[RMDB]
RNA sequence: GGGAACGACUCGAGUAGAGUCGAAAAGCGUACUACAAGCGCCAAUAAGCUAUGAAGUAGGUAAGCAAGGUCCCAAAUAGGACCUUGUAUCCUAUGGAGCUUAAAAAUGCUUGUAUCGCAAAAUCCGGUUUAAAAAGUUCGCUUUUUAAACCGGAAACUAUACGUCGAAGUUCGCUUCGACGUAUAGAAAAGAAACAACAACAACAAC
Reactivity to DMS in 0.01 (KOAc 150mM, MgCl2 10mM, bicine 150mM(pH8.5), 24C), signal-to-noise 1, nucleotides 027 to 156: g000c050g040u000a020c070u000a010c020a080a000g000c000g020c030c090a000a300u000a090a050g060c010u010a100u010g000a220a300g000u000a030g000g010u000a090a280g020c000a040a040g000g010u000c010c000c020a050a100a270u020a050g000g000a000c010c040u020u000g010u000a070u000c000c020u000a000u000g000g010a030g030c000u010u000a010a080a170a150a090u000g010c030u000u000g010u000a000u000c030g040c000a040a060a100a130u010c000c010g010g010u000u000u000a000a010a000a040a000g010u000u000c300g010c030u000u000u000u010u000a000a020a010c000c000g000g000a000a000a010
Reactivity to 2A3 in 0.01 (KOAc 150mM, MgCl2 10mM, bicine 150mM(pH8.5), 24C), signal-to-noise 2, nucleotides 027 to 156: g020c010g020u090a060c040u010a000c030a000a000g000c000g030c010c010a010a070u010a010a000g000c010u060a100u300g010a020a010g000u010a000g030g030u070a260a120g020c010a000a010g000g000u010c030c020c030a120a130a060u210a080g000g000a000c000c000u000u000g010u020a070u080c000c000u000a010u010g000g010a010g010c000u020u000a010a020a000a020a000u000g000c000u000u010g010u010a020u230c010g000c000a000a000a000a160u000c000c000g000g000u000u000u000a000a000a000a000a000g010u070u130c250g130c110u000u000u000u000u000a010a000a010c000c010g000g000a000a000a000